[RMDB]
RNA sequence: GGGAACGACUCGAGUAGAGUCGAAAAGAGGCAGCGACGGGGAGCGCGCGAGCGAGGCGGGCCCACAGCCCCCGCCGCGGAGCCGAGGGCAAGGUCUGGUGCCAGCAGCCGCGGUAAUUCCAGCUCGAGUAAUGAAAAUCUUCGGAUUUUCAUUACUAAAAGAAACAACAACAACAAC
Reactivity to 2A3 in 0.01 (KOAc 150mM, MgCl2 10mM, bicine 150mM(pH8.5), 24C), signal-to-noise 5, nucleotides 027 to 126: g070a010g020g020c040a020g010c030g050a030c040g040g000g020g020a110g030c040g000c020g000c010g030a050g020c020g020a030g020g030c030g030g020g020c010c030c010a090c020a020g010c000c000c000c000c020g000c000c000g000c020g010g020a030g020c020c020g010a090g010g020g020c050a040a040g040g010u040c060u120g050g020u080g030c000c010a030g000c060a010g020c010c020g010c010g000g020u050a040a050u110u060c020c020a020g020c030u020c040g050
Reactivity to DMS in 0.01 (KOAc 150mM, MgCl2 10mM, bicine 150mM(pH8.5), 24C), signal-to-noise 5, nucleotides 027 to 126: g000a070g010g000c020a090g020c050g000a060c070g010g000g010g010a090g000c070g010c080g020c080g000a080g000c040g000a090g010g020c060g000g000g010c030c040c050a090c150a170g010c020c020c020c030c030g000c020c020g010c030g010g010a130g000c080c090g000a110g010g000g020c000a090a070g000g020u020c030u000g000g020u010g000c010c020a100g020c070a110g020c020c010g010c040g000g000u020a070a100u010u020c050c020a130g000c050u010c040g010